An RNA of 207 nucleotides, treated with 2A3 and read out base by base.
RNA sequence: GGGAACGACUCGAGUAGAGUCGAAAAGGUCAGGCCUGAUCGGAAACAGCAGCAGGUGAGUCCGCCUUAUGUGAAGGAUCGGCUGAAACACGAGGAAAUACUGAGCCAACGCAAGACGGUACCCGAAAAAAUCUAGUUCACUUCGGUGAACUAGAAACGAAUGGAUGACCUUCGGGUCAUCCAUUCGAAAAGAAACAACAACAACAAC
Reactivity to 2A3 in 0.01 (KOAc 150mM, MgCl2 10mM, bicine 150mM(pH8.5), 24C), signal-to-noise 1, nucleotides 027 to 156: g040g020u070c000a040g050g180c040c030u150g060a050u060c000g030g040a130a030a090c020a020g010c040a010g040c030a040g000g090u040g070a090g040u090c100c140g010c090c000u180u100a120u200g040u010g160a020a130g000g000a030u040c000g000g020c020u040g000a060a060a000c040a020c050g010a070g090g060a070a190a000u230a140c000u040g000a000g020c040c060a020a000c120g010c110a110a000g010a000c130g000g010u030a080c000c000c030g050a090a070a080a040a000a000u000c000u000a000g000u000u000c000a000c000u030u010c260g090g010u000g000a000a000c000u000a000g000a010a010a000
The reactions ran in a buffer of 150 mM KOAc, 10 mM MgCl2 and 150 mM bicine (pH 8.5), at 24 C.